Chemical mapping of a 177-nucleotide RNA with 2A3 and DMS. Source: RMDB library TTRDEL, as collected in RNAgym. High 2A3 reactivity points to a flexible backbone, as in loops and unpaired stretches. Conditions: 150 mM KOAc, 10 mM MgCl2 and 150 mM bicine (pH 8.5), 24 C.

RNA sequence: GGGAACGACUCGAGUAGAGUCGAAAAGAUAUGGAAGCCCAAGACAUGCUCCCUCGGAAACGAGUGAGAGCAACAGCUUGGCUUCCUAAGUCAAAGUGUGGUAAUGUGUUCGCACAUUACCACACAACACUUACAUGUGCUUCGGCACAUGUAAGUGAAAAGAAACAACAACAACAAC
Reactivity to 2A3 in 0.01 (KOAc 150mM, MgCl2 10mM, bicine 150mM(pH8.5), 24C), signal-to-noise 3, nucleotides 027 to 126: g000a010u050a000u100g010g020a010a010g000c080c090c050a010a010g080a110c100a110u100g010c010u000c010c010c010u000c000g010g010a050a040a010c020g020a000g050u200g080a300g000a000g060c010a030a050c040a010g070c010u000u010g010g000c000u010u000c000c000u000a040a010g050u030c070a080a100a120g000u000g010u010g000g000u000a020a000u010g050u000g050u090u120c270g040c150a000c000a010u000u000a010c000c000a000c010a000c000a010a010
Reactivity to DMS in 0.01 (KOAc 150mM, MgCl2 10mM, bicine 150mM(pH8.5), 24C), signal-to-noise 3, nucleotides 027 to 126: g010a030u000a300u010g000g000a030a010g010c210c040c050a020a020g000a050c070a240u000g010c010u000c000c000c000u010c000g020g010a080a060a160c010g000a010g010u010g010a190g000a020g000c010a010a030c220a130g000c000u010u000g000g010c000u010u000c000c010u000a000a050g000u000c050a100a150a140g010u000g010u000g000g010u000a010a000u000g020u000g010u000u020c220g000c010a000c000a000u000u000a010c000c010a000c010a000c000a000a240